[RMDB]
RNA sequence: GGGAACGACUCGAGUAGAGUCGAAAAGAUAUGGAAUUCCAUAUGUAGAGUGAUGACCUAGCUCGGAAACGAGCUAGCAAGCUUGAAAUGGAGAUUCCUAAGUCAAAGUGGAACUUCGGUUCCACAACGAUAGUACAUCGUUCGCGAUGUACUAUCGAAAAGAAACAACAACAACAAC
Reactivity to DMS in 0.01 (KOAc 150mM, MgCl2 10mM, bicine 150mM(pH8.5), 24C), signal-to-noise 5, nucleotides 027 to 126: g010a040u000a300u010g000g000a040a010u000u000c000c000a010u000a080u010g030u000a200g010a010g010u000g020a110u010g020a120c300c010u000a010g010c000u000c000g000g000a090a110a220c020g010a000g000c010u000a010g000c040a040a200g020c000u000u000g010a120a070a050u000g010g000a060g000a040u000u000c000c000u010a090a170g000u000c050a070a100a210g000u000g010g010a020a010c000u000u010c230g030g000u000u000c000c000a000c000a030a070
Reactivity to 2A3 in 0.01 (KOAc 150mM, MgCl2 10mM, bicine 150mM(pH8.5), 24C), signal-to-noise 5, nucleotides 027 to 126: g010a010u090a050u160g010g010a020a010u040u000c010c010a000u060a060u170g060u090a040g010a020g050u070g160a300u160g020a050c010c000u000a000g000c000u000c000g010g020a050a070a040c010g000a000g000c000u010a000g000c000a050a170g030c000u030u070g030a030a050a030u020g020g000a180g050a110u010u030c000c000u010a110a010g070u050c080a120a080a120g000u010g000g000a010a010c010u050u080c300g140g000u010u010c000c000a000c000a010a000